[RMDB]
RNA sequence: GGGAACGACUCGAGUAGAGUCGAAAACGACCAUAGCUCCACUAGCCGAGCCAGGCUGGGUGGCAAUUCGUGCAUUGGUGCCCCGCCGAGACAUCAACGGGAUUAUGGACGAGCUUGCCGCCAUCGAUCCGAUUUAGGAGUUCGCUCCUAAAUCGGAAAAAGAAACAACAACAACAAC
Reactivity to DMS in 0.01 (KOAc 150mM, MgCl2 10mM, bicine 150mM(pH8.5), 24C), signal-to-noise 1, nucleotides 027 to 126: c150g040a140c060c040a040u000a140g000c020u020c020c010a080c160u010a120g010c050c020g010a080g020c060c100a050g010g020c040u000g010g000g080u000g010g000c050a000a000u000u000c060g030u000g000c050a060u000u010g000g020u000g050c060c010c000c030g000c110c070g000a030g010a170c300a110u000c030a030a090c120g000g000g000a130u000u000a030u000g000g000a010c030g000a010g010c270u000u000g000c000c010g060c000c010a070u000c110g000a120
Reactivity to 2A3 in 0.01 (KOAc 150mM, MgCl2 10mM, bicine 150mM(pH8.5), 24C), signal-to-noise 1, nucleotides 027 to 126: c080g030a020c000c010a050u100a100g000c020u030c050c020a070c130u090a030g070c090c070g050a040g100c120c050a040g060g070c050u060g040g010g000u020g000g000c000a010a010u000u020c010g000u100g090c000a030u010u110g150g030u270g240c040c000c000c000g000c040c030g150a090g090a090c030a200u140c030a100a000c010g000g020g010a020u000u150a020u060g050g090a030c000g000a010g000c030u010u020g010c050c010g000c000c000a030u050c060g020a070
Source information
This 177-nucleotide RNA was probed chemically with DMS and 2A3. 2A3 adducts were read by reverse transcription with SuperScript II with manganese. For DMS, 901 sequencing reads were counted. For DMS the reverse transcriptase was MarathonRT.